[RMDB]
RNA sequence: GGGAACGACUCGAGUAGAGUCGAAAAGGACGCAUUGGCCACCGGUCGCAGGAUCAAGUGCCUUACCUGCGUAGACGACUUCACGAAGGAAUGCCUGACGGUCACUGUUGCCUUUGGGAUUUCAGGCGGGGAGAGACAGAUUCGUCUGUCUCUCCCCAAAAGAAACAACAACAACAAC
Reactivity to DMS in 0.01 (KOAc 150mM, MgCl2 10mM, bicine 150mM(pH8.5), 24C), signal-to-noise 1, nucleotides 027 to 126: g000g000a010c090g010c030a050u010u000g000g020c010c000a090c110c090g000g020u000c030g000c110a080g000g000a080u000c120a040a110g040u000g030c020c100u020u000a090c060c010u000g050c010g010u000a060g010a110c130g000a060c030u000u020c070a090c100g020a040a060g020g000a120a090u010g040c000c000u000g000a110c060g000g010u000c010a020c070u000g010u030u010g020c010c010u000u000u000g020g000g090a220u010u000u000c010a020g020g030c300